[RMDB]
RNA sequence: GGGAACGACUCGAGUAGAGUCGAAAAUCGGAACGUAAGAAAUGGAUACACUGCUUCGAAGAUGUCACGGCGAUCAUUUUCUGCGUGGCCAUGUCCGAGUACGAUCAAGUCUUGCAUGAGGAUGAAACAUGACCGAUCGAUUCGUCGAUCGGUCAUGAAAAGAAACAACAACAACAAC
Reactivity to 2A3 in 0.01 (KOAc 150mM, MgCl2 10mM, bicine 150mM(pH8.5), 24C), signal-to-noise 3, nucleotides 027 to 126: u030c010g000g060a050a060c020g030u180a030a040g090a070a130a000u170g070g000a020u160a140c070a070c070u170g040c010u110u200c110g100a110a060g040a160u100g010u070c020a000c100g200g000c040g080a030u140c080a090u000u010u110u030c000u010g060c000g000u060g000g060c000c000a010u060g010u000c010c010g060a060g020u020a030c050g010a060u100c050a050a030g150u030c060u030u060g010c010a110u160g040a030g070g010a130u180g010a060a000a000
Reactivity to DMS in 0.01 (KOAc 150mM, MgCl2 10mM, bicine 150mM(pH8.5), 24C), signal-to-noise 2, nucleotides 027 to 126: u010c020g000g000a040a020c110g000u050a120a050g000a030a090a030u000g060g030a020u030a070c020a020c030u020g010c060u030u030c230g000a000a040g000a140u020g030u000c010a050c110g010g000c250g000a030u020c100a000u000u000u000u070c020u020g000c060g000u000g000g000c000c150a050u010g030u030c000c020g030a190g000u000a050c040g000a050u010c070a080a210g000u040c000u000u000g040c020a070u020g010a200g000g000a020u020g000a130a040a130
Structure probing data (2A3 and DMS) for a 177-nucleotide construct.
Conditions: 150 mM KOAc, 10 mM MgCl2 and 150 mM bicine (pH 8.5), 24 C.
Values cover nucleotides 27 to 126.
For DMS the reverse transcriptase was MarathonRT.